An RNA of 207 nucleotides, treated with 2A3 and DMS and read out base by base. It was measured as part of the RMDB library OK3TST. For 2A3 the reverse transcriptase was SuperScript II with manganese.
[RMDB]
RNA sequence: GGGAACGACUCGAGUAGAGUCGAAAAGGCCUGGCUCCGCUGCCUCCAGGUCCAACUACUGCUGGUGAACCCAGUCUUGGUGCCGUUUAGAUUCUGGGAGAGCUGAUGAAACAUGAUAUGGGCUGCAUUUGGGAAAAUUCCAGCAAACAAAGUCAGGACUUAUACUGCGUUUCGACGCAGUAUAAGUAAAAGAAACAACAACAACAAC
Reactivity to 2A3 in 0.01 (KOAc 150mM, MgCl2 10mM, bicine 150mM(pH8.5), 24C), signal-to-noise 3, nucleotides 027 to 156: g000g020c000c000u000g010g020c040u060c080c070g040c050u060g020c010c010u000c000c010a020g000g000u050c030c020a060a020c050u170a040c020u030g010c010u030g000g040u080g100a100a100c000c000c020a030g040u030c040u050u080g040g000u040g040c040c000g030u050u080u010a060g010a100u120u050c040u080g040g010g010a070g020a020g010c030u040g030a090u050g060a070a090a030c030a030u070g000a010u080a060u140g010g010g000c000u040g020c030a060u090u070u050g020g030g010a000a120a020a030u170u030c020c000a010g020c020a010a030a070c050a010a110a010g050u070c030a030g120g000
Reactivity to DMS in 0.01 (KOAc 150mM, MgCl2 10mM, bicine 150mM(pH8.5), 24C), signal-to-noise 2, nucleotides 027 to 156: g010g030c000c020u000g000g000c000u000c020c070g020c060u000g000c030c060u000c000c010a090g010g010u000c030c060a060a110c010u000a070c080u000g020c030u000g030g000u000g010a070a300c050c000c010a120g010u010c060u000u000g040g010u000g000c020c050g030u000u000u010a100g000a110u000u000c060u000g010g000g000a120g000a090g030c030u000g020a070u020g000a150a060a090c060a090u010g070a120u000a110u010g000g010g000c030u000g010c070a120u000u000u000g020g000g030a050a030a040a180u010u000c000c000a040g020c030a050a050a160c030a050a070a090g020u000c030a110g010g000